[RMDB]
RNA sequence: GGGAACGACUCGAGUAGAGUCGAAAAGAUAUGGAUUAUCAUAGGAGCUUUGAUCAGAUGUCGGAAACGACAUCUGGGAGCUCACUAUGAGUAAUCCUAAGUCAAAACUCAGAGUUCGCUCUGAGAACGCGUAGUAAGUGUUCGCACUUACUACGCGAAAAGAAACAACAACAACAAC
Reactivity to 2A3 in 0.01 (KOAc 150mM, MgCl2 10mM, bicine 150mM(pH8.5), 24C), signal-to-noise 1, nucleotides 027 to 126: g090a030u100a060u220g020g000a000u030u040a010u090c000a000u040a000g010g020a010g020c040u300u300u080g150a120u220c020a010g010a000u010g000u010c000g060g000a080a070a080c000g000a000c000a000u000c000u000g000g000g000a000g000c000u000c030a010c010u000a010u030g100a050g050u020a010a030u000c010c000u000a110a000g060u040c060a010a000a090a240c000u010c010a000g010a020g000u080u130c210g080c060u000c020u000g040a020g020a030a030
Reactivity to DMS in 0.01 (KOAc 150mM, MgCl2 10mM, bicine 150mM(pH8.5), 24C), signal-to-noise 1, nucleotides 027 to 126: g000a040u010a300u000g000g000a010u000u000a000u010c000a010u000a010g030g000a020g010c000u000u010u010g020a090u000c010a000g000a000u000g000u010c000g050g020a110a050a260c010g010a000c020a000u000c010u040g000g010g000a000g030c000u000c010a090c000u000a000u000g000a040g010u010a000a010u000c000c030u020a010a260g000u000c080a100a040a170a150c000u000c000a010g000a030g070u020u020c300g000c000u000c000u000g000a020g000a120a100
Overview
The record gives the reactivity of an RNA of 177 nucleotides to 2A3 and DMS. The reactions ran in a buffer of 150 mM KOAc, 10 mM MgCl2 and 150 mM bicine (pH 8.5), at 24 C. For DMS the reverse transcriptase was MarathonRT. 2A3 adducts were read by reverse transcription with SuperScript II with manganese. For DMS, 971 sequencing reads were counted.